Conditions: 150 mM KOAc, 10 mM MgCl2 and 150 mM bicine (pH 8.5), 24 C. An RNA of 177 nucleotides, treated with DMS and 2A3 and read out base by base.
RNA sequence: GGGAACGACUCGAGUAGAGUCGAAAACUAGUGCCAUUCGUGGCACUAGAAGGGGUCCAGCCUGGAAAGGCUGGAGGUAUUGGAAUGGUCGGGCCGCCUUUCAAGGUACGCUAUUCGUAGCGUACAACGAGUGUAGUUAGUUCGCUAACUACACUCGAAAAGAAACAACAACAACAAC
Reactivity to DMS in 0.01 (KOAc 150mM, MgCl2 10mM, bicine 150mM(pH8.5), 24C), signal-to-noise 4, nucleotides 027 to 126: c000u000a000g010u000g010c000c000a040u000u010c210g030u000g000g010c010a000c000u000a000g010a120a080g010g000g000g000u000c000c000a010g010c000c000u000g010g040a120a160a010g010g010c000u000g020g010a000g000g000u010a090u010u010g000g000a010a030u010g020g020u000c010g010g000g000c000c010g000c020c010u000u000u000c030a080a130g010g010u000a010c000g010c000u000a030u000u010c200g020u000a010g000c000g020u000a000c000a070a120
Reactivity to 2A3 in 0.01 (KOAc 150mM, MgCl2 10mM, bicine 150mM(pH8.5), 24C), signal-to-noise 5, nucleotides 027 to 126: c000u000a000g000u000g010c020c000a020u030u050c250g100u070g000g000c000a000c000u000a000g000a010a030g040g030g010g000u020c000c010a000g020c000c000u050g090g140a220a120a010g010g000c010u000g000g060a000g030g000u100a160u100u210g040g030a020a040u170g010g000u020c000g020g010g000c010c000g000c010c000u000u020u020c030a030a010g150g000u010a000c000g000c000u010a020u030u100c220g050u020a000g010c000g010u000a010c000a010a020
The 2A3 profile rests on 13,395 reads. The DMS profile rests on 8,581 reads. High 2A3 reactivity points to a flexible backbone, as in loops and unpaired stretches. For 2A3 the reverse transcriptase was SuperScript II with manganese.